The data come from the RNA Mapping Database (RMDB), library OK1LIB. This 177-nucleotide RNA was probed chemically with 2A3. The reactions ran in a buffer of 150 mM KOAc, 10 mM MgCl2 and 150 mM bicine (pH 8.5), at 24 C. Values cover nucleotides 27 to 126.
RNA sequence: GGGAACGACUCGAGUAGAGUCGAAAAUACAGGCAUUACCCGGCAGCCGCGUACAGGUCGAUAAUCUGUGCCUGUGUGGCGGUGCGUGGGUUACUGCGCAGACAAAUAUCCUCCAGCGCGGCUUGCGCGUCGCGCCGCGUUUCGACGCGGCGCGACGAAAAGAAACAACAACAACAAC
Reactivity to 2A3 in 0.01 (KOAc 150mM, MgCl2 10mM, bicine 150mM(pH8.5), 24C), signal-to-noise 1, nucleotides 027 to 126: u300a030c050a060g070g000c020a050u000u170a020c000c000c000g000g010c000a020g180c000c000g000c000g020u000a000c000a000g010g000u000c020g010a000u100a140a030u240c280u300g060u060g000c010c000u050g000u080g000u040g270g000c000g000g000u010g040c000g170u160g000g000g000u000u020a060c040u050g000c170g000c100a000g100a170c150a160a210a000u300a170u140c000c070u040c040c000a040g040c010g050c000g020g000c110u080u200g000c050g000